[RMDB]
RNA sequence: GGGAACGACUCGAGUAGAGUCGAAAAGAUAUGGACAUGCGUAGGGAGCUGGUCGGAAACGACCCAGCAUCGAUCUACCAUGUCCUAAGUCAAAAGGUAAUAACUGGGUUCGCCCAGUUAUUACCAAUCAUUUGUACCGGUUCGCCGGUACAAAUGAAAAAGAAACAACAACAACAAC
Reactivity to 2A3 in 0.01 (KOAc 150mM, MgCl2 10mM, bicine 150mM(pH8.5), 24C), signal-to-noise 1, nucleotides 027 to 126: g020a000u070a000u120g000g010a000c010a020u040g000c150g100u000a000g020g040g040a020g010c010u000g040g010u020c000g020g070a070a040a040c010g020a020c060c150c030a000g030c000a150u300c010g070a070u090c010u000a000c010c000a000u000g000u000c000c000u000a020a000g020u000c030a040a020a100a140g000g000u000a000a010u000a010a010c000u020g040g000g050u110u090c210g140c010c000c000a000g000u000u000a000u000u000a000c000c010a010a000
Reactivity to DMS in 0.01 (KOAc 150mM, MgCl2 10mM, bicine 150mM(pH8.5), 24C), signal-to-noise 3, nucleotides 027 to 126: g000a020u000a300u000g000g020a010c010a020u000g010c220g040u000a020g010g000g000a040g040c000u000g000g010u000c000g010g010a100a050a170c000g000a000c110c040c060a000g030c000a250u010c110g010a060u020c010u000a000c030c000a010u010g000u000c000c000u000a010a080g010u010c040a070a070a100a090g010g010u000a000a010u000a010a010c000u000g020g000g030u000u000c300g000c000c000c000a000g010u000u010a000u010u010a020c000c010a010a010